An RNA of 177 nucleotides, treated with 2A3 and DMS and read out base by base. Reactivities are given for positions 27 through 126. 2A3 adducts were read by reverse transcription with SuperScript II with manganese.
RNA sequence: GGGAACGACUCGAGUAGAGUCGAAAACAUAAUGACUUCGGUCAUUAUGAAAUAAAGGCAGUCGAGUGCGCGCGGCACAGUCACGCGCUGUCGCCACGACAAAAAUCGGGACCUUCGGGUCCCGAAACAACUAAGUUCUGUUCGCAGAACUUAGUUGAAAAGAAACAACAACAACAAC
Reactivity to 2A3 in 0.01 (KOAc 150mM, MgCl2 10mM, bicine 150mM(pH8.5), 24C), signal-to-noise 4, nucleotides 027 to 126: c010a000u010a010a010u010g010a000c020u030u040c220g080g000u000c010a000u010u010a010u000g020a020a020a010u190a030a070a030g110g050c070a020g030u040c020g050a010g050u050g030c020g000c010g000c010g040g030c040a060c050a190g080u110c020a020c120g010c000g000c010u020g040u060c020g000c030c050a240c060g030a010c040a020a120a010a000a010u030c010g000g010g020a000c000c000u030u060c220g080g010g000u020c000c000c000g010a010a000a000
Reactivity to DMS in 0.01 (KOAc 150mM, MgCl2 10mM, bicine 150mM(pH8.5), 24C), signal-to-noise 5, nucleotides 027 to 126: c010a010u000a000a000u000g000a020c000u000u010c220g030g010u000c000a000u000u010a000u000g000a050a090a080u000a050a090a120g010g020c120a090g010u000c040g010a180g000u000g000c070g000c020g020c040g000g010c030a110c130a080g000u000c080a060c110g020c050g000c010u000g010u010c060g000c010c010a080c030g010a040c050a040a060a050a080a100u000c010g010g010g010a020c000c000u000u010c240g040g010g010u000c000c000c010g000a000a010a070
Record summary: The RNA was probed in 150 mM KOAc, 10 mM MgCl2 and 150 mM bicine (pH 8.5) at 24 C.